[RMDB]
RNA sequence: GGGAACGACUCGAGUAGAGUCGAAAAGCGUACUACUAGAAUGUAAACUAUGUGGGAGAGCUAAAAAUGAGUAUCCCAAAUAGGAUACUCGCCAAUAGCUCGACGAUCACAUAGGAAGAAGUUCUAGUAUCGCAAAAGGCCUCGUUCGCGAGGCCAACAAUACCGCUCGUUUCGACGAGCGGUAUUGAAAAGAAACAACAACAACAAC
Reactivity to 2A3 in 0.01 (KOAc 150mM, MgCl2 10mM, bicine 150mM(pH8.5), 24C), signal-to-noise 3, nucleotides 027 to 156: g010c010g040u090a080c030u010a000c000u000a040g000a020a010u050g030u000a000a000a000c000u000a000u000g000u000g000g000g000a030g000a000g010c010u020a020a000a020a000a000u010g000a000g000u000a000u020c020c020c070a180a180a170u290a060g000g000a000u000a000c000u000c000g000c010c010a020a090u010a000g010c000u010c000g130a050c000g000a010u000c010a010c000a000u000a000g020g000a030a090g010a000a000g000u000u010c000u010a000g000u000a000u030c000g000c000a040a070a000a070g000g000c000c000u000c000g020u050u060c160g030c010g110a000g010g000c000c000a000a000
Reactivity to DMS in 0.01 (KOAc 150mM, MgCl2 10mM, bicine 150mM(pH8.5), 24C), signal-to-noise 3, nucleotides 027 to 156: g050c030g050u040a090c150u000a030c000u010a000g020a020a020u000g040u000a000a160a300c000u000a000u000g000u010g000g000g000a060g000a020g020c010u000a000a080a120a120a080u020g000a030g000u010a000u000c000c000c010a060a160a190u020a040g000g010a030u000a010c010u000c000g050c040c050a010a300u000a030g010c000u000c010g000a010c160g010a120u010c000a020c000a000u000a030g000g000a040a180g020a090a300g000u000u000c000u010a020g000u020a020u000c030g000c010a040a090a090a100g050g000c000c000u000c010g040u010u000c100g040c020g020a000g050g060c040c010a000a000
An RNA of 207 nucleotides, treated with 2A3 and DMS and read out base by base. The data come from the RNA Mapping Database (RMDB), library RNAMAK. The reactions ran in a buffer of 150 mM KOAc, 10 mM MgCl2 and 150 mM bicine (pH 8.5), at 24 C.